The record gives the reactivity of an RNA of 177 nucleotides to DMS and 2A3. DMS (dimethyl sulfate) methylates the pairing face of unpaired adenines and cytosines. For 2A3, 24,330 sequencing reads were counted.
RNA sequence: GGGAACGACUCGAGUAGAGUCGAAAAGAUAUGGAUCAUUUCCUUCGAUAAGCUUUCAUCGGAAACGAUGGGAAGCUUUUGACGAAGGUAGUGAUCCUAAGUCAAAAGCCAAUGUUCGCAUUGGCAAGACUAAAGAUUACUUCGGUAAUCUUUAGUCAAAAGAAACAACAACAACAAC
Reactivity to DMS in 0.01 (KOAc 150mM, MgCl2 10mM, bicine 150mM(pH8.5), 24C), signal-to-noise 7, nucleotides 027 to 126: g000a040u000a300u010g000g000a010u000c000a010u000u000u000c000c000u000u010c010g020a170u010a020a010g010c000u000u000u000c000a030u010c000g020g000a130a080a150c000g020a010u000g010g020g010a000a010g010c000u000u000u000u010g030a230c220g000a020a010g000g000u000a010g020u000g010a000u000c000c000u000a010a060g010u010c020a110a100a150a140g010c010c000a010a010u000g010u010u010c270g020c010a010u000u000g000g010c010a060a040
Reactivity to 2A3 in 0.01 (KOAc 150mM, MgCl2 10mM, bicine 150mM(pH8.5), 24C), signal-to-noise 3, nucleotides 027 to 126: g020a010u060a020u150g000g000a000u010c010a000u000u020u050c020c000u000u000c050g160a170u050a300a010g000c000u010u000u030c010a010u000c000g020g030a050a030a030c020g000a010u020g130g070g120a010a020g020c000u020u020u020u050g080a080c060g000a000a000g000g010u010a000g010u000g000a000u000c000c000u000a060a010g030u000c030a060a030a120a060g000c000c010a000a000u030g030u050u120c300g000c180a010u020u020g000g000c010a000a010